[RMDB]
RNA sequence: GGGAACGACUCGAGUAGAGUCGAAAAUUCCCUUGACCGAGAGGUCUGGGUAAUCCUUUAAUACUCAUCGUGCUGGGGAUUGAUUCUUGUAAUUAUUAAUCAUGAACGAGGAAUUCCUAGUAAACGCGAAGCUAACUCGUUUCGACGAGUUAGCUUCAAAAGAAACAACAACAACAAC
Reactivity to 2A3 in 0.01 (KOAc 150mM, MgCl2 10mM, bicine 150mM(pH8.5), 24C), signal-to-noise 5, nucleotides 027 to 126: u050u050c000c000c000u000u140g020a010c010c000g030a020g010a040g080g000u010c010u020g010g010g010u040a020a040u070c030c000u040u060u120a180a140u170a110c080u070c090a170u100c080g020u010g000c000u000g000g000g020g010a010u000u080g110a110u090u000c030u010u030g030u000a160a090u050u130a060u130u150a160a060u130c070a060u070g070a040a030c030g000a030g010g020a020a010u000u000c000c010u000a020g000u020a070a270a010c060g040c060
Reactivity to DMS in 0.01 (KOAc 150mM, MgCl2 10mM, bicine 150mM(pH8.5), 24C), signal-to-noise 2, nucleotides 027 to 126: u010u010c000c000c000u020u010g000a020c010c000g010a240g010a220g000g020u010c020u010g000g000g000u000a070a080u020c050c060u010u050u020a190a090u020a100c160u000c050a110u040c030g000u010g010c010u010g000g010g000g000a010u000u000g010a100u000u050c000u000u000g000u050a080a070u020u070a160u000u020a070a050u000c180a010u000g020a130a050c160g030a010g000g000a050a060u010u000c000c000u000a020g000u000a010a070a030c090g030c300